[RMDB]
RNA sequence: GGGAACGACUCGAGUAGAGUCGAAAAGGAGGCAAGUUCGCUUGCCUCCAAAGAAGCUCAAAUUGACGCAAACAUCCGCGUCAUCGCGAGCAUGCGAGGAAAAAACCGUGAACUUCGGUUCACGGAAGUAAAUCAAGAUGUUCGCAUCUUGAUUUACAAAAGAAACAACAACAACAAC
Reactivity to DMS in 0.01 (KOAc 150mM, MgCl2 10mM, bicine 150mM(pH8.5), 24C), signal-to-noise 7, nucleotides 027 to 126: g010g010a010g000g010c010a020a010g020u000u020c220g020c000u000u000g010c000c010u000c000c000a000a040a060g000a080a100g040c000u000c000a040a300a050u000u000g010a010c000g010c000a100a120a160c220a090u010c230c170g000c000g000u010c000a010u000c100g010c300g000a010g000c020a040u000g010c060g010a120g020g000a000a080a060a060a110a070c000c000g000u000g000a010a000c000u000u010c190g010g000u000u000c000a010c000g000g000a000a040
Reactivity to 2A3 in 0.01 (KOAc 150mM, MgCl2 10mM, bicine 150mM(pH8.5), 24C), signal-to-noise 4, nucleotides 027 to 126: g000g000a000g000g020c000a010a010g030u040u060c040g010c050u000u000g000c000c000u020c000c000a000a000a000g000a020a030g000c010u000c000a020a080a220u070u040g020a000c010g000c010a060a270a260c090a300u110c150c110g010c000g030u010c000a010u010c030g000c030g010a020g010c000a010u120g030c020g100a140g110g000a100a120a040a010a020a010c000c000g000u000g000a000a000c000u040u070c240g060g000u000u010c000a000c000g000g000a010a000